Chemical mapping of a 177-nucleotide RNA with 2A3 and DMS. The RNA was probed in 150 mM KOAc, 10 mM MgCl2 and 150 mM bicine (pH 8.5) at 24 C. For 2A3 the reverse transcriptase was SuperScript II with manganese.
[RMDB]
RNA sequence: GGGAACGACUCGAGUAGAGUCGAAAAUGAUUGAGCGUAGCACACACUCAGACUGUACGACAGACUGACACACACCUACGCUAGUGCAUCGUGUGUGUGAUAUCGAUGUAGCACGAAAAUGAAGUAAGCCAUACACGGAUUUCGAUCCGUGUAUGGCAAAAGAAACAACAACAACAAC
Reactivity to 2A3 in 0.01 (KOAc 150mM, MgCl2 10mM, bicine 150mM(pH8.5), 24C), signal-to-noise 2, nucleotides 027 to 126: u260g020a100u160u170g040a040g060c000g000u000a000g000c040a020c010a000c010a040c050u020c010a000g020a060c000u040g020u100a100c090g100a020c210a020g010a030c000u010g050a030c000a000c010a000c000a010c110c010u020a000c040g000c030u030a080g030u020g030c000a000u030c030g000u040g010u000g000u000g020u020g030a050u010a030u190c060g010a030u040g010u060a060g050c000a010c120g090a140a000a000a070u160g040a100a040g080u100a090a010
Reactivity to DMS in 0.01 (KOAc 150mM, MgCl2 10mM, bicine 150mM(pH8.5), 24C), signal-to-noise 2, nucleotides 027 to 126: u000g010a080u000u000g000a100g010c000g020u010a020g020c050a070c050a120c020a190c110u000c000a010g020a160c020u000g000u000a180c220g010a080c000a030g020a120c030u000g010a060c050a030c110a110c100a070c080c040u010a020c020g030c020u010a070g010u030g030c070a100u000c010g010u000g000u000g020u000g010u000g000a150u010a050u000c060g010a010u000g020u000a070g020c000a010c110g010a030a020a070a060u010g020a040a090g000u010a070a160